[RMDB]
RNA sequence: GGGAACGACUCGAGUAGAGUCGAAAACGAUUAUGCAGUGGCCUACGGCAGCAAAGUCAACCUUGUGAGGUUGGGGGCAGCUGAGGUAUGGGAGCCAUAGAUUCAUUUUGUGGUGACGGGAUUUUAGGUGAGUAUCUAGAUUACUUUAUUCUGUCCGAGUCUUACGAGUAUUCGUACUCGUAAGACUAAAAGAAACAACAACAACAAC
Reactivity to 2A3 in 0.01 (KOAc 150mM, MgCl2 10mM, bicine 150mM(pH8.5), 24C), signal-to-noise 3, nucleotides 027 to 156: c040g020a080u160u130a060u200g050c030a020g050u020g050g050c000c030u080a070c070g070g000c020a030g000c050a110a030a030g140u100c000a020a010c020c000u160u100g140u130g270a060g020g010u010u030g010g000g010g070g000c030a020g000c040u020g010a020g030g050u090a060u200g020g000g040a020g030c000c030a000u050a040g030a040u120u150c050a050u110u130u090u100g090u060g030g030u070g040a020c040g100g000g020a050u090u090u130u230a060g030g010u020g020a000g020u040a070u050c060u050a030g020a150u060u050a060c050u010u120u160a060u160u070c020u010g060u040c050c080g000
Reactivity to DMS in 0.01 (KOAc 150mM, MgCl2 10mM, bicine 150mM(pH8.5), 24C), signal-to-noise 2, nucleotides 027 to 156: c080g000a140u000u000a080u010g020c080a170g030u010g010g010c010c030u000a070c060g030g020c030a090g000c050a040a080a130g020u000c060a080a100c020c000u000u020g010u010g020a170g050g000u020u000g010g020g050g040g050c080a160g030c040u040g000a080g000g080u000a130u000g010g020g030a290g000c030c010a070u000a040g010a100u000u000c070a120u010u010u010u010g030u000g040g030u000g000a080c040g020g000g020a070u010u000u000u000a060g030g010u000g000a070g020u000a060u000c110u000a150g000a110u000u000a040c060u000u000u000a070u030u000c040u000g000u010c030c020g020